[RMDB]
RNA sequence: GGGAACGACUCGAGUAGAGUCGAAAACGUCGUGAACUAGCGACAAUGCAUUAGGUCCAUCGUUAUCUAACCGAAACAUCGUGACUAGUUAUAGAAUAGAACCAUGAGAGGGCGCUGGCAAACAAAGAGGGAGUGUAUUAUUCGUAGUACGCUCCCUAAAAGAAACAACAACAACAAC
Reactivity to 2A3 in 0.01 (KOAc 150mM, MgCl2 10mM, bicine 150mM(pH8.5), 24C), signal-to-noise 8, nucleotides 027 to 126: c030g000u010c010g020u030g050a090a030c040u010a040g010c000g040a010c010a010a030u070g020c010a040u040u100a040g010g010u000c020c000a070u030c050g040u040u050a070u030c050u050a030a050c010c020g030a030a030a020c040a070u070c040g030u040g060a060c010u010a020g070u080u050a060u030a080g120a090a040u080a060g030a030a010c020c010a030u020g030a030g020a020g050g010g000c010g000c010u010g010g010c000a020a040a010c020a030a100a010g120
Reactivity to DMS in 0.01 (KOAc 150mM, MgCl2 10mM, bicine 150mM(pH8.5), 24C), signal-to-noise 9, nucleotides 027 to 126: c130g000u020c030g010u020g010a100a090c060u010a070g000c060g000a040c060a090a060u030g000c060a050u010u010a110g010g010u000c040c040a070u010c080g010u010u010a060u020c080u020a080a070c050c030g000a120a110a100c080a040u010c050g010u010g000a100c030u000a030g000u000u010a090u020a080g010a060a060u020a080g010a090a090c030c040a050u010g000a080g000a060g000g000g010c020g000c030u010g000g010c050a060a060a060c130a050a070a080g000